[RMDB]
RNA sequence: GGGAACGACUCGAGUAGAGUCGAAAAUCUCUCUUGUUCGCAAGAGAGAAAAGAACGCCAAAGUGACGCAAACAUCCGCGUCAGGAAGGCGAAACGAGGUAAAAAGGGGGAUCUUCGGAUCCCCCAACUAUAAUCAGACCUUCGGGUCUGAUUAUAGAAAAGAAACAACAACAACAAC
Reactivity to DMS in 0.01 (KOAc 150mM, MgCl2 10mM, bicine 150mM(pH8.5), 24C), signal-to-noise 3, nucleotides 027 to 126: u000c000u000c000u000c000u000u000g000u000u000c200g040c000a000a010g000a010g000a000g000a010a010a100a120g010a170a190c040g000c020c000a030a100a300g020u000g000a020c020g010c010a100a130a140c230a140u010c170c220g000c010g000u010c010a010g000g020a270a140g010g000c000g000a000a070a050c110g000a060g010g020u010a050a070a060a100a090g030g010g000g020g020a020u000c000u000u010c150g050g000a010u000c010c000c000c010c000a000a000
Reactivity to 2A3 in 0.01 (KOAc 150mM, MgCl2 10mM, bicine 150mM(pH8.5), 24C), signal-to-noise 1, nucleotides 027 to 126: u010c000u040c000u000c000u020u000g030u040u050c150g010c090a000a000g000a030g000a000g020a020a000a000a000g010a050a010c000g000c000c000a110a000a000g170u020g010a000c000g020c020a000a200a100c080a270u080c190c080g000c000g000u010c000a000g010g020a030a000g000g010c010g000a010a000a010c060g030a050g050g070u130a070a080a000a060a130g050g010g000g030g000a010u020c000u030u050c180g040g000a000u010c010c000c000c000c000a010a000